[RMDB]
RNA sequence: GGGAACGACUCGAGUAGAGUCGAAAAGUCUAGCGAAAGGAUCCCACCCGGGAUACACGCAAGUCGCGAAUUAGGCCGACCGGCCAAGGUCAAUAGCAGAACUCAACUGCAUGAGUAAGCUAGACGACAUGGAUAGGGUGUUCGCACCCUAUCCAUGAAAAGAAACAACAACAACAAC
Reactivity to 2A3 in 0.01 (KOAc 150mM, MgCl2 10mM, bicine 150mM(pH8.5), 24C), signal-to-noise 2, nucleotides 027 to 126: g000u000c000u000a000g050c000g070a220a030a050g100g020a020u010c030c000c000a070c040c030c010g000g020g000a030u070a140c130a020c060g040c020a060a040g210u130c050g030c030g060a100a110u120u040a110g030g000c020c040g090a190c060c070g020g000c030c020a030a030g030g000u070c020a010a080u040a130g000c020a000g040a130a060c020u060c140a020a180c080u090g040c040a090u060g030a000g080u010a020a010g000c020u020a020g010a000c000g000a010
Reactivity to DMS in 0.01 (KOAc 150mM, MgCl2 10mM, bicine 150mM(pH8.5), 24C), signal-to-noise 3, nucleotides 027 to 126: g010u000c000u000a020g000c010g010a110a170a110g010g000a020u000c000c000c010a220c300c150c220g010g000g010a050u000a070c050a140c050g010c060a060a080g010u010c110g000c060g010a050a050u000u000a070g000g020c010c040g020a140c230c210g000g020c030c050a030a060g030g000u010c010a060a070u000a100g000c020a070g000a090a090c120u010c060a050a100c090u000g000c070a130u000g030a120g010u000a070a150g000c010u000a000g000a010c040g010a170

Source: RMDB library OK2TRN, as collected in RNAgym. Chemical mapping of a 177-nucleotide RNA with 2A3 and DMS. For DMS, 1,517 sequencing reads were counted. The RNA was probed in 150 mM KOAc, 10 mM MgCl2 and 150 mM bicine (pH 8.5) at 24 C. For 2A3, 1,894 sequencing reads were counted.